[RMDB]
RNA sequence: GGGAACGACUCGAGUAGAGUCGAAAAGACGGUUAGCUCAAUGGACCGAGUCGUCCGCAAUAGAACAGGCGACCUGUACCUGCGCCUAUAGAGGACCAACGACAGUGCAGGAUGAACUAACCGUUGAAGACACAGAGCUGUUCGCAGCUUUGUGUCUAAAAGAAACAACAACAACAAC
Reactivity to DMS in 0.01 (KOAc 150mM, MgCl2 10mM, bicine 150mM(pH8.5), 24C), signal-to-noise 9, nucleotides 027 to 126: g000a020c000g000g000u000u000a010g010c030u000c010a060a100u020g010g000a100c050c030g010a190g020u000c130g000u000c010c040g020c140a170a100u030a090g010a270a120c100a090g010g010c030g000a040c070c040u020g000u010a300c020c020u010g010c040g010c030c100u020a100u030a160g000a170g010g020a100c080c140a090a090c110g000a110c300a070g000u000g000c010a020g010g010a160u000g000a000a030c010u000a000a010c010c000g000u010u000g010a070
Reactivity to 2A3 in 0.01 (KOAc 150mM, MgCl2 10mM, bicine 150mM(pH8.5), 24C), signal-to-noise 9, nucleotides 027 to 126: g040a000c000g000g010u010u000a010g000c010u010c030a090a200u190g100g050a070c040c040g030a090g010u010c000g000u010c000c010g000c030a080a150u130a100g070a090a020c040a030g000g000c000g010a030c000c010u020g010u030a010c000c010u000g000c010g010c010c010u090a070u060a090g120a030g040g050a050c040c060a090a030c060g100a040c020a010g000u010g010c000a000g010g050a040u050g000a000a000c000u000a000a000c000c000g000u000u010g000a010

Annotation:
The record gives the reactivity of an RNA of 177 nucleotides to DMS and 2A3. Values cover nucleotides 27 to 126. For DMS, 27,579 sequencing reads were counted. The RNA was probed in 150 mM KOAc, 10 mM MgCl2 and 150 mM bicine (pH 8.5) at 24 C. DMS (dimethyl sulfate) methylates the pairing face of unpaired adenines and cytosines. 2A3 adducts were read by reverse transcription with SuperScript II with manganese. It was measured as part of the RMDB library OK1LIB.